Chemical mapping of a 177-nucleotide RNA with 2A3 and DMS. It was measured as part of the RMDB library TTRDEL. Reactivities are given for positions 27 through 126.

RNA sequence: GGGAACGACUCGAGUAGAGUCGAAAAGAUAUGGACACUUCCGAUAAGCUUUGGUCGGAAACGACCAUAAGCUUUUGACGGAAGGUCCUAAGUCAAACAACACAGAAUGUUCGCAUUCUGUGUUGAAGUACCUAGGAAUCUUCGGAUUCCUAGGUACAAAAGAAACAACAACAACAAC
Reactivity to 2A3 in 0.01 (KOAc 150mM, MgCl2 10mM, bicine 150mM(pH8.5), 24C), signal-to-noise 3, nucleotides 027 to 126: g000a010u010a000u050g030g000a030c090a110c300u000u030c010c020g050a080u090a300a010g000c020u010u010u010g000g000u000c000g020g000a030a010a010c010g000a000c010c020a030u110a070a000g000c020u010u020u050u030g020a010c010g000g000a000a000g000g000u000c000c000u000a010a000g020u000c020a090a090a100c010a020a000c000a000c010a000g020a000a000u020g030u090u150c270g030c200a010u000u000c010u010g000u000g000u000u000g000a000a000
Reactivity to DMS in 0.01 (KOAc 150mM, MgCl2 10mM, bicine 150mM(pH8.5), 24C), signal-to-noise 2, nucleotides 027 to 126: g010a020u000a040u010g000g010a020c010a090c000u000u000c000c000g010a080u000a010a020g020c010u000u000u000g000g000u000c000g000g000a010a030a040c010g010a010c000c000a010u040a010a020g020c000u000u000u010u010g010a300c030g000g000a010a010g000g010u000c000c000u000a010a040g000u000c000a110a130a270c020a010a010c000a010c000a010g000a010a010u000g010u000u030c220g010c000a010u000u000c000u000g020u000g000u000u000g000a040a110